Description: The record gives the reactivity of an RNA of 177 nucleotides to DMS and 2A3. For 2A3 the reverse transcriptase was SuperScript II with manganese. For 2A3, 2,235 sequencing reads were counted. Values are in units of 0.01, from 0 to 300, in steps of 10.

[RMDB]
RNA sequence: GGGAACGACUCGAGUAGAGUCGAAAAUCGAGCAGGCGCACCGUGCAGGGGUGUUGCCUCCGCUGCUCAGCCUUUGUAGGGUGGCGGACAGCGCUGCAGCCAGUGCAAUGCCAAUGGCCACAAAGGAUACACCCGUCAAAUUCGUUUGACGGGUGUAAAAAGAAACAACAACAACAAC
Reactivity to DMS in 0.01 (KOAc 150mM, MgCl2 10mM, bicine 150mM(pH8.5), 24C), signal-to-noise 3, nucleotides 027 to 126: u000c070g010a120g010c040a050g020g010c070g010c010a010c020c000g040u040g040c160a130g040g020g000g020u000g000u010u030g020c020c080u000c030c040g010c080u000g000c000u000c010a220g030c020c160u000u010u030g020u010a210g000g010g000u000g000g010c030g030g000a070c130a120g010c040g010c000u000g020c140a110g010c140c030a040g000u000g000c020a090a090u010g000c010c000a080a100u000g020g010c030c030a070c040a020a030a090g000g000a300
Reactivity to 2A3 in 0.01 (KOAc 150mM, MgCl2 10mM, bicine 150mM(pH8.5), 24C), signal-to-noise 2, nucleotides 027 to 126: u130c050g000a020g000c010a000g040g000c010g000c040a020c030c040g130u260g140c100a080g110g110g010g000u010g010u070u250g000c000c000u020c000c020g030c030u050g000c000u010c020a060g060c010c020u160u070u130g040u040a150g020g040g020u040g000g020c020g010g050a030c050a050g030c010g000c040u080g000c050a060g150c090c000a000g000u000g000c010a030a050u070g000c030c020a030a050u080g070g020c010c000a060c000a000a060a050g050g010a010